[RMDB]
RNA sequence: GGGAACGACUCGAGUAGAGUCGAAAAGAUAUGGAUGAGGCGCAACAGCAUGGCGUAACAUCAUUCGGAAACGAAUGUGGCCAUGACAUGCGUGUAGUCCUAAGUCAAAGGCUCGUUCGCGAGCCAAGAUGAAUCAACAGUUCGCUGUUGAUUCAUCAAAAGAAACAACAACAACAAC
Reactivity to DMS in 0.01 (KOAc 150mM, MgCl2 10mM, bicine 150mM(pH8.5), 24C), signal-to-noise 7, nucleotides 027 to 126: g010a040u010a300u010g000g010a010u000g000a170g010g010c000g010c010a020a080c250a170g000c000a000u000g000g000c010g000u000a070a130c150a050u020c000a010u000u000c000g010g010a130a100a170c000g010a010a000u000g010u010g010g000c000c000a010u000g000a030c070a160u000g000c000g030u000g000u000a270g000u000c000c000u010a060a110g000u000c050a090a110a130g000g010c000u000c000g020u000u010c180g010c000g000a010g010c000c000a000a030
Reactivity to 2A3 in 0.01 (KOAc 150mM, MgCl2 10mM, bicine 150mM(pH8.5), 24C), signal-to-noise 5, nucleotides 027 to 126: g040a040u090a040u150g010g000a010u020g020a060g180g000c010g000c020a020a190c040a190g080c010a010u010g000g000c050g080u140a060a070c030a190u300c000a000u010u010c000g010g020a070a060a040c020g000a000a000u000g010u040g040g000c010c000a000u010g070a100c000a020u040g010c000g010u230g020u050a010g010u000c000c000u020a100a010g040u030c070a120a050a070g010g000c010u010c010g040u100u100c300g030c020g130a000g020c010c000a000a010